[RMDB]
RNA sequence: GGGAACGACUCGAGUAGAGUCGAAAAGAUAUGGAAGAUGCCGGUGGGCACUGAAGACAUGUUGUCACAUCGGAAACGAUGUCCUAACAACAGCUUCACAUGUGCCCACCGGCAUCUUCCUAAGUCACUUUGUAAGUUACUUCGGUAACUUACAAAGAAAAGAAACAACAACAACAAC
Reactivity to DMS in 0.01 (KOAc 150mM, MgCl2 10mM, bicine 150mM(pH8.5), 24C), signal-to-noise 3, nucleotides 027 to 126: g010a070u000a300u000g000g000a040a040g020a020u000g020c000c020g000g020u000g000g010g030c000a020c000u010g000a030a010g000a090c130a130u000g010u000u000g000u000c300a020c010a010u000c000g020g000a130a100a250c000g000a010u000g000u020c200c130u010a090a030c000a000a020c010a010g000c000u000u000c010a130c300a090u020g010u000g010c000c000c000a010c030c000g000g000c000a000u000c000u000u000c000c000u000a000a030g010u000c060a180